[RMDB]
RNA sequence: GGGAACGACUCGAGUAGAGUCGAAAACGCGAGAAUCGCGGGAUGGAUGUUUAUGAUCUGUUGCAGCCGACUAGUCAACUCGGCCUUGACUUUUGGGUCAGUGACCCCGAAAACGACCCGCAGGAUGGACAUACCGGACGUUCGCGUCCGGUAUGUCAAAAGAAACAACAACAACAAC
Reactivity to 2A3 in 0.01 (KOAc 150mM, MgCl2 10mM, bicine 150mM(pH8.5), 24C), signal-to-noise 2, nucleotides 027 to 126: c130g040c060g070a100g150a100a130u190c030g030c010g000g000g010a080u160g040g020a010u060g120u020u090u060a170u160g070a030u000c010u040g060u070u050g020c000a000g000c000c020g040a050c050u110a060g160u130c070a030a020c030u000c000g000g000c000c000u060u110g040a100c000u020u160u190u090g000g010g020u010c140a150g030u130g180a140c000c040c000c000g120a000a140a000a000c030g000a020c000c000c000g020c010a000g030g170a070u150g110
Reactivity to DMS in 0.01 (KOAc 150mM, MgCl2 10mM, bicine 150mM(pH8.5), 24C), signal-to-noise 1, nucleotides 027 to 126: c050g000c100g010a050g050a070a010u040c010g000c070g020g000g000a050u000g000g000a090u080g000u000u000u030a030u020g000a000u020c040u020g000u000u000g000c070a130g000c000c000g000a040c140u000a090g000u000c150a030a110c120u000c100g050g010c120c120u090u000g010a050c090u000u000u000u020g040g000g000u000c010a190g000u020g000a040c060c020c000c030g000a020a050a080a200c020g000a100c030c040c000g000c140a050g000g000a060u050g000